[RMDB]
RNA sequence: GGGAACGACUCGAGUAGAGUCGAAAAAUGAAAUGAAUUGGACUGGAUGGUUAAGGAUGCCCAGAAGAUUGAAUAAAAUUGGGAUUUAGGAGGACCCUUGUACUCCAGGAAAUUCUCCAAGUCUCCACGCUGAUAAUUGAUUCGUCAAUUAUCAGCGAAAAGAAACAACAACAACAAC
Reactivity to DMS in 0.01 (KOAc 150mM, MgCl2 10mM, bicine 150mM(pH8.5), 24C), signal-to-noise 3, nucleotides 027 to 126: a100u010g000a110a100a090u000g020a060a030u010u000g010g000a300c020u010g000g000a030u010g010g010u010u010a030a040g010g000a090u010g000c030c010c010a120g000a110a170g010a070u010u000g010a100a080u000a080a040a050a140u000u010g000g000g010a120u000u000u000a090g000g000a080g010g000a070c120c030c020u010u000g020u010a070c130u000c010c030a040g000g000a100a050a140u000u000c020u000c040c040a020a100g000u000c010u010c040c110a160
Reactivity to 2A3 in 0.01 (KOAc 150mM, MgCl2 10mM, bicine 150mM(pH8.5), 24C), signal-to-noise 1, nucleotides 027 to 126: a020u080g000a060a050a020u090g010a000a030u050u030g060g070a030c080u030g000g010a010u030g120g020u050u040a030a020g020g030a040u070g100c040c040c070a000g040a030a050g070a080u190u230g060a030a100u120a190a060a000a050u050u040g020g020g060a010u060u050u100a130g020g010a060g000g000a030c000c030c000u020u010g000u050a100c040u000c010c010a010g010g060a030a030a010u040u030c060u000c050c000a070a050g020u000c020u030c060c000a060